[RMDB]
RNA sequence: GGGAACGACUCGAGUAGAGUCGAAAAAUGGGUACAGGUGAAGCUAGUGGCGAAGAUAGAGCUAUUAAAGCGGCAGAAUCUGCAAUUUCAAAUCCACUGCUAGAUCAUAGCUCAAUGUGCGGUGCAAAAUGAGUAUCGGAUUCGUCCGAUACUCAUUAAAAGAAACAACAACAACAAC
Reactivity to 2A3 in 0.01 (KOAc 150mM, MgCl2 10mM, bicine 150mM(pH8.5), 24C), signal-to-noise 3, nucleotides 027 to 126: a000u070g010g000g000u090a050c050a080g080g000u040g050a070a010g010c030u050a020g060u010g060g030c030g010a020a000g020a040u120a050g030a000g020c020u010a020u030u120a130a220a030g040c030g020g000c010a020g030a100a050u020c030u080g020c060a060a100u060u120u110c080a120a060a070u010c010c030a040c020u000g010c020u030a020g020a090u060c020a020u060a010g000c000u010c000a020a080u110g000u070g020c070g020g000u040g020c040a110a070
Reactivity to DMS in 0.01 (KOAc 150mM, MgCl2 10mM, bicine 150mM(pH8.5), 24C), signal-to-noise 5, nucleotides 027 to 126: a080u000g010g020g010u010a060c080a070g000g000u020g010a110a120g010c070u000a050g020u010g010g010c050g000a090a080g010a090u010a100g000a060g000c010u000a060u000u000a070a120a100g010c060g000g010c020a040g000a120a080u010c080u000g010c250a080a060u000u000u000c070a040a080a090u010c060c080a080c040u000g010c010u010a050g000a090u010c130a020u000a020g000c010u000c040a070a070u000g010u000g010c040g010g000u000g010c130a070a080

Source information:
The record gives the reactivity of an RNA of 177 nucleotides to 2A3 and DMS. Conditions: 150 mM KOAc, 10 mM MgCl2 and 150 mM bicine (pH 8.5), 24 C. The data come from the RNA Mapping Database (RMDB), library OK2TST. For DMS, 5,754 sequencing reads were counted.